RNA sequence: GGGAACGACUCGAGUAGAGUCGAAAAGUCCUUACGCCUCCGUUUACGGUCAAAGUUCCGUGCGUAGGGUCGCCAGUUCGAGCUGCUCCAGCGGGCGCAGUAGCGAGUCAUCCCGCACCGGAUUCCAAUUUAGCUCAGGUUUCGACCUGAGCUAAAUAAAAGAAACAACAACAACAAC
Reactivity to DMS in 0.01 (KOAc 150mM, MgCl2 10mM, bicine 150mM(pH8.5), 24C), signal-to-noise 2, nucleotides 027 to 126: g000u000c010c010u000u000a030c030g010c010c030u000c040c070g020u000u000u010a050c000g000g010u010c140a100a100a230g020u020u000c090c000g000u000g000c000g000u000a040g020g010g010u010c030g040c080c070a130g000u000u000c040g000a080g020c040u000g000c000u010c010c020a200g020c120g010g010g010c080g010c050a060g060u000a110g030c010g000a060g000u000c040a120u010c020c000c020g020c130a090c130c080g000g010a130u010u000c050c040a080
Reactivity to 2A3 in 0.01 (KOAc 150mM, MgCl2 10mM, bicine 150mM(pH8.5), 24C), signal-to-noise 1, nucleotides 027 to 126: g000u040c000c000u000u000a020c020g000c020c010u050c000c070g100u110u200u250a020c030g060g000u070c110a300a120a120g070u120u010c040c020g010u030g010c000g010u000a030g040g010g000u040c050g040c150c030a040g000u030u060c030g020a030g020c020u020g000c000u000c000c000a180g140c090g080g070g020c000g000c010a060g010u060a040g050c000g010a000g040u020c040a070u030c000c030c000g030c010a030c000c090g030g060a100u080u020c030c010a020
The record gives the reactivity of an RNA of 177 nucleotides to DMS and 2A3. The reactions ran in a buffer of 150 mM KOAc, 10 mM MgCl2 and 150 mM bicine (pH 8.5), at 24 C. DMS adducts were read by reverse transcription with MarathonRT. Reactivities are given for positions 27 through 126. 2A3 adducts were read by reverse transcription with SuperScript II with manganese.